Structure probing data (DMS and 2A3) for a 177-nucleotide construct. The DMS profile rests on 2,614 reads. Conditions: 150 mM KOAc, 10 mM MgCl2 and 150 mM bicine (pH 8.5), 24 C. DMS adducts were read by reverse transcription with MarathonRT.

[RMDB]
RNA sequence: GGGAACGACUCGAGUAGAGUCGAAAAGGAGCAGGGUGAACCGCACAUGUAGCCCGUUCGCUCAGUGUACUGCGAGUGAUCGGGAGCUGGACAGAUGCCUGGUUUCUGGAAGGUCAGCGCACUGGGGACGAGUGCGAUCAUUCGUGAUCGCACUCGUAAAAGAAACAACAACAACAAC
Reactivity to DMS in 0.01 (KOAc 150mM, MgCl2 10mM, bicine 150mM(pH8.5), 24C), signal-to-noise 2, nucleotides 027 to 126: g000g000a010g010c070a080g000g030g060u000g030a100a140c040c070g030c080a100c070a060u020g010u010a110g000c020c010c010g010u000u000c000g050c000u000c000a090g000u030g010u020a110c200u010g000c050g000a020g000u020g000a050u030c010g030g000g000a040g010c040u010g110g010a160c060a090g040a070u010g050c030c020u020g000g000u000u000u000c000u000g010g030a180a070g000g000u000c020a100g040c020g000c020a020c020u010g000g000g040g010
Reactivity to 2A3 in 0.01 (KOAc 150mM, MgCl2 10mM, bicine 150mM(pH8.5), 24C), signal-to-noise 2, nucleotides 027 to 126: g080g000a060g010c020a050g030g030g000u080g040a030a050c040c000g040c030a040c020a080u060g030u040a030g050c000c000c000g010u030u030c020g000c020u000c040a080g000u040g060u130a140c070u110g030c020g010a020g010u030g020a090u050c020g000g030g000a040g020c020u050g000g010a010c020a050g120a100u100g050c010c020u060g020g000u040u000u070c040u030g030g040a050a010g020g030u080c050a010g000c010g000c060a020c030u030g000g000g010g030